[RMDB]
RNA sequence: GGGAACGACUCGAGUAGAGUCGAAAACCCCUCUGUGGAAUACACUACGUUACUUACCUUUAUGGUGGCAAGGGCUCGAAGAGGGAUCCACGGGGAAACCUACUCGAGCGAGGCGGAGAUCGAGCGCGAUGAAUCCUUAGUUCGCUAAGGAUUCAUCAAAAGAAACAACAACAACAAC
Reactivity to DMS in 0.01 (KOAc 150mM, MgCl2 10mM, bicine 150mM(pH8.5), 24C), signal-to-noise 4, nucleotides 027 to 126: c030c000c010c100u010c030u000g020u020g000g010a120a060u010a140c090a080c070u010a060c080g010u000u010a110c070u000u000a070c030c020u000u030u000a150u010g010g030u000g010g010c050a060a070g000g000g010c010u010c010g010a030a050g010a040g000g000g000a130u000c020c010a110c260g020g000g000g000a040a040a180c000c000u000a050c030u000c000g000a020g010c010g010a040g000g010c030g000g000a050g000a100u000c060g010a060g000c090g020c150
Reactivity to 2A3 in 0.01 (KOAc 150mM, MgCl2 10mM, bicine 150mM(pH8.5), 24C), signal-to-noise 5, nucleotides 027 to 126: c010c000c020c000u000c040u040g050u030g040g100a070a110u220a160c030a010c090u150a030c060g080u080u070a060c020u110u070a040c000c020u160u190u160a170u300g050g000u020g020g020c040a060a060g110g050g000c020u010c030g070a120a060g010a030g070g010g010a030u010c020c050a100c150g300g030g010g040a030a030a000c020c020u060a090c000u040c020g010a000g010c020g000a020g010g020c020g020g040a060g010a040u100c060g030a020g070c080g000c050

Structure probing data (DMS and 2A3) for a 177-nucleotide construct. The DMS profile rests on 3,587 reads. DMS adducts were read by reverse transcription with MarathonRT. The RNA was probed in 150 mM KOAc, 10 mM MgCl2 and 150 mM bicine (pH 8.5) at 24 C. For 2A3 the reverse transcriptase was SuperScript II with manganese. Reactivities are given for positions 27 through 126.